The data come from the RNA Mapping Database (RMDB), library OK2TRN.
Structure probing data (2A3 and DMS) for a 177-nucleotide construct.
For 2A3, 1,095 sequencing reads were counted.
Conditions: 150 mM KOAc, 10 mM MgCl2 and 150 mM bicine (pH 8.5), 24 C.
The DMS profile rests on 1,591 reads.
2A3 adducts were read by reverse transcription with SuperScript II with manganese.
[RMDB]
RNA sequence: GGGAACGACUCGAGUAGAGUCGAAAAGGCAACAAGGCGACAGCGUGGAAGUCUCCGCCGAGAAGGGCUACCUGCGCGAGUUCGGCAACCUGGUGUUCCACUUCGCGCUGCUGGGUCUGCUGGUGGCAAGCGAGAUAGUCUUCGGACUAUCUCGCUUAAAAGAAACAACAACAACAAC
Reactivity to 2A3 in 0.01 (KOAc 150mM, MgCl2 10mM, bicine 150mM(pH8.5), 24C), signal-to-noise 1, nucleotides 027 to 126: g010g040c020a060a040c020a140a160g090g000c010g010a020c020a000g020c020g030u010g070g070a030a030g060u010c050u040c080c050g030c040c030g040a050g080a010a060g050g000g000c020u040a120c040c030u070g040c040g020c020g010a000g000u120u100c060g000g040c030a010a040c010c000u150g300g000u190g070u030u040c000c000a010c000u130u170c080g030c070g000c020u010g000c030u090g040g050g000u080c040u050g060c060u060g070g070u020g020g000c020
Reactivity to DMS in 0.01 (KOAc 150mM, MgCl2 10mM, bicine 150mM(pH8.5), 24C), signal-to-noise 1, nucleotides 027 to 126: g030g010c030a030a070c060a040a110g020g020c020g000a070c070a030g010c060g000u030g020g030a070a090g010u000c030u000c040c050g020c090c010g050a060g010a110a050g000g010g020c010u010a040c080c030u000g000c040g010c020g010a070g000u000u000c200g020g000c120a040a040c020c020u000g020g000u010g000u000u000c030c050a050c040u000u000c060g000c050g010c010u010g030c050u000g000g020g000u010c050u010g000c000u000g020g020u000g010g010c140